[RMDB]
Conditions: 150 mM KOAc, 10 mM MgCl2 and 150 mM bicine (pH 8.5), 24 C. The record gives the reactivity of an RNA of 207 nucleotides to 2A3. Reactivities are given for positions 27 through 156. The 2A3 profile rests on 634 reads. It was measured as part of the RMDB library M2RFPK.

RNA sequence: GGGAACGACUCGAGUAGAGUCGAAAAGACUGAUGUAGAGUUCGGUUGGAGCGACAAGUAUUUAGCUUGAGAUAGCUAAAUCACCUUGGUAUGAUUAGGGUGAGACCUAGGAACCGUAGGGGUAUUCAAUGCUGUAUUGCGUUCGCGCAAUACAGAAGAAUCUCCCUCGUUUCGACGAGGGAGAUUCAAAAGAAACAACAACAACAAC
Reactivity to 2A3 in 0.01 (KOAc 150mM, MgCl2 10mM, bicine 150mM(pH8.5), 24C), signal-to-noise 1, nucleotides 027 to 156: g010a040c030u060g020a050u150g090u060a030g010a070g030u060u150c010g020g050u010u080g000g010a010g000c060g090a030c020a010a000g020u040a030u010u050u010a000g030c000u040u000g010a040g000a050u060a020g000c010u000a000a000a000u030c010a040c010c030u000u000g080g020u270a140u170g030a060u120u080a070g000g060g000u030g080a070g010a040c010c010u040a060g000g010a000a010c040c020g040u060a050g000g030g040g030u030a140u030u120c060a040a070u200g070c000u000g000u000a020u020u000g000c000g000u010u070c180g000c000g000c090a010a000u000a000c020a000g000a000a010